RNA sequence: GGGAACGACUCGAGUAGAGUCGAAAACAAACAGAAAAUAACAGGGUCCCUAUGCAUUAGAAUGGACCAAGCAAUAGUGGACAAAAACAUCACAUUGAAAGCAAAUUUCAGUGUGAUUUUCAAUCGACCGACUAGUGAUAUUCGUAUCACUAGUCGGAAAAGAAACAACAACAACAAC
Reactivity to DMS in 0.01 (KOAc 150mM, MgCl2 10mM, bicine 150mM(pH8.5), 24C), signal-to-noise 1, nucleotides 027 to 126: c080a130a080a110c130a110g000a040a020a020a140u000a080a150c160a220g030g000g020u000c000c020c010u000a020u030g010c040a040u000u000a050g000a100a110u020g020g000a130c070c060a120a060g000c020a050a060u000a000g020u070g110g000a090c040a070a160a040a110a070c230a010u000c000a000c000a030u000u000g000a000a000a000g000c220a050a140a250u000u000u010c040a040g060u000g010u030g000a000u000u000u000u000c100a010a060u000c220g000a120
Reactivity to 2A3 in 0.01 (KOAc 150mM, MgCl2 10mM, bicine 150mM(pH8.5), 24C), signal-to-noise 2, nucleotides 027 to 126: c010a020a070a050c090a060g210a080a220a040a080u250a100a050c060a140g300g140g000u000c020c000c000u030a030u050g020c050a050u000u210a080g090a270a110u240g110g130a040c060c070a000a000g020c020a060a180u050a070g080u160g080g000a040c040a040a100a060a000a040c050a010u000c000a000c000a000u000u000g010a000a010a010g070c110a190a080a300u000u020u010c000a010g000u020g020u010g000a010u000u020u000u000c000a070a100u110c070g110a070
This 177-nucleotide RNA was probed chemically with DMS and 2A3.